[RMDB]
RNA sequence: GGGAACGACUCGAGUAGAGUCGAAAAUGAGGUGCCUACAACGUGUUUUUGAGUGGGCCUGUGUCUCUGUGUGCGCCGUGUGCGGAUAGCUUGCUAUGCGUGUGUGGUUGUGUGUGGAUUGAUGUGGACACGUUAUUUACUUCGGUAAAUAACGUGUAAAAGAAACAACAACAACAAC
Reactivity to DMS in 0.01 (KOAc 150mM, MgCl2 10mM, bicine 150mM(pH8.5), 24C), signal-to-noise 2, nucleotides 027 to 126: u010g010a120g000g000u000g010c030c010u000a050c070a100a120c170g010u000g010u000u000u000u020u010g020a220g020u010g000g010g020c030c020u000g020u000g010u000c020u000c030u020g010u010g000u000g020c040g030c020c010g000u020g020u010g020c020g010g000a040u000a020g010c030u010u000g000c030u000a020u010g000c020g010u000g010u000g030u000g000g000u010u020g010u000g020u000g010u010g000g000a120u010u000g000a080u000g010u010g000g000
Structure probing data (DMS) for a 177-nucleotide construct. For DMS, 4,514 sequencing reads were counted. The reactions ran in a buffer of 150 mM KOAc, 10 mM MgCl2 and 150 mM bicine (pH 8.5), at 24 C. For DMS the reverse transcriptase was MarathonRT.